Structure probing data (2A3 and DMS) for a 170-nucleotide construct. DMS adducts were read by reverse transcription with MarathonRT. For DMS, 7,495 sequencing reads were counted. Source: RMDB library 15KLIB, as collected in RNAgym. 2A3 adducts were read by reverse transcription with SuperScript II with manganese.

RNA sequence: GGGAACGACUCGAGUAGAGUCGAAAAGGUAUGUUAAAAUUACUGGGUUGUACCCAACCAUUACGGUACCUGAAGAGUUCGCAAGUCAUGUUGCCAACUUCCAAAAAUCAGGUUAUAGUAAAUAUGUCGCCCCAAUGCUUCGGCAUUGGGAAAAGAAACAACAACAACAAC
Reactivity to 2A3 in 0.01 (KOAc 150mM, MgCl2 10mM, bicine 150mM(pH8.5), 24C), signal-to-noise 6, nucleotides 027 to 129: g050g030u080a040u110g050u060u300a100a090a080a070u130u040a070c050u010g010g010g000u040u030g040u100a120c000c000c000a010a020c030c010a030u040u120a030c060g020g050u010a000c000c020u010g000a040a020g000a010g050u000u000c020g000c010a030a050g040u280c070a170u210g050u110u000g000c000c000a000a010c010u140u080c050c030a090a110a040a070a100u050c010a010g000g000u020u020a050u070a050g070u040a000a070a030u190a050u090g140u110c060g080c010
Reactivity to DMS in 0.01 (KOAc 150mM, MgCl2 10mM, bicine 150mM(pH8.5), 24C), signal-to-noise 2, nucleotides 027 to 129: g000g000u020a040u020g020u030u050a030a040a070a050u000u000a000c000u000g030g040g020u020u050g020u080a200c040c020c020a000a130c100c070a010u060u030a020c030g030g090u080a000c000c030u000g020a060a090g010a050g000u050u010c300g000c000a020a070g010u050c260a080u000g050u000u000g040c030c080a020a040c000u030u080c130c270a070a080a030a140a000u030c020a030g050g000u000u000a050u000a140g010u060a050a050a090u060a060u040g010u060c070g060c150